[RMDB]
RNA sequence: GGGAACGACUCGAGUAGAGUCGAAAACUCAAUCACUACGGUGAUUGAGAAUGCUUACGCCUCAAUCAAGCUUGAGUUGAGUGCCUCAAGCAGAUAUAGACUGAAACAUUUAGUAUGGUCAAGCAGGGAGCAACAGCUCGAGUACGCUCGAGCUGAAGUAAUACGAGUGCUUCGGCACUCGUAUUACAAAAGAAACAACAACAACAAC
Reactivity to 2A3 in 0.01 (KOAc 150mM, MgCl2 10mM, bicine 150mM(pH8.5), 24C), signal-to-noise 3, nucleotides 027 to 156: c000u000c000a000a000u000c000a000c000u040a020c200g120g000u000g010a000u000u010g000a000g000a000a070u080g000c000u030u040a010c080g050c010c010u040c030a050a060u030c050a100a060g030c030u020u020g030a010g030u060u080g070a040g070u070g110c020c000u010c020a000a020g000c010a010g010a000u110a000u050a050g080a020c040u070g060a130a150a020c050a040u090u160u080a070g010u040a090u170g030g010u010c010a020a010g000c030a030g070g020g020a050g000c010a020a050c000a030g000c000u000c010g000a000g000u030a030c200g030c060u000c000g000a000g000c000u010g000a010a000
Reactivity to DMS in 0.01 (KOAc 150mM, MgCl2 10mM, bicine 150mM(pH8.5), 24C), signal-to-noise 1, nucleotides 027 to 156: c000u000c020a020a020u000c000a010c010u030a030c300g090g000u010g000a020u020u000g000a010g040a100a020u000g030c050u010u000a100c060g000c040c030u000c050a070a030u000c080a030a260g000c040u000u020g070a140g000u000u040g000a120g000u000g030c170c010u000c080a080a060g000c040a110g040a160u000a060u000a070g000a120c010u000g040a140a120a070c020a080u000u010u020a040g030u000a110u000g010g020u000c020a040a070g000c040a120g000g000g000a230g000c040a150a170c070a080g020c010u030c000g010a010g020u000a080c300g050c040u010c040g000a080g030c010u000g000a030a070
An RNA of 207 nucleotides, treated with 2A3 and DMS and read out base by base.
DMS adducts were read by reverse transcription with MarathonRT.
2A3 adducts were read by reverse transcription with SuperScript II with manganese.
It was measured as part of the RMDB library OK3TST.
The 2A3 profile rests on 2,131 reads.